[RMDB]
This 207-nucleotide RNA was probed chemically with 2A3 and DMS. DMS adducts were read by reverse transcription with MarathonRT. The DMS profile rests on 2,392 reads.
RNA sequence: GGGAACGACUCGAGUAGAGUCGAAAAAUCAAGUGAAUCGCCGUAACGGAGCGUGUUCGUCCGCGACGUCACGGUUAAAUCAAAUGACAGAACUAAACAUGUAGAACUGGUCGUGGACCGCUUCUGGACGCGGGUUCGAUUCCCGCCGCCUCCACCACACAGCAAUAAUGUUCGCAUUAUUGCUGUGAAAAGAAACAACAACAACAAC
Reactivity to 2A3 in 0.01 (KOAc 150mM, MgCl2 10mM, bicine 150mM(pH8.5), 24C), signal-to-noise 3, nucleotides 027 to 156: a000u140c080a070a030g040u040g130a060a110u100c050g010c010c020g010u010a020a010c010g010g010a020g000c010g010u060g060u070u100c070g020u060c010c000g020c000g000a000c010g010u020c030a000c020g000g000u010u010a010a020a020u070c030a000a030a080u070g030a020c090a120g070a070a040c040u130a120a060a050c090a130u160g040u130a040g040a140a020c070u090g060g000u030c030g080u060g060g010a020c030c010g020c080u080u050c000u100g010g020a040c040g000c000g030g010g000u050u100c030g010a020u040u030c010c000c000g010c000c040g010c010c020u000c000c000a020c020c000a040
Reactivity to DMS in 0.01 (KOAc 150mM, MgCl2 10mM, bicine 150mM(pH8.5), 24C), signal-to-noise 1, nucleotides 027 to 156: a090u000c030a150a090g020u000g050a060a030u020c100g030c030c000g030u000a030a080c050g000g000a160g010c030g070u000g060u000u000c200g030u000c050c000g000c000g020a100c000g000u000c010a080c030g000g030u020u000a030a110a110u010c040a090a080a110u000g000a140c140a100g010a100a250c060u000a100a080a090c060a100u000g000u000a100g010a050a100c030u000g000g000u000c040g030u000g020g030a060c030c040g000c020u000u000c050u000g000g010a030c120g000c000g050g000g000u000u000c090g010a300u000u000c000c000c000g010c020c010g020c030c000u000c020c010a090c060c050a190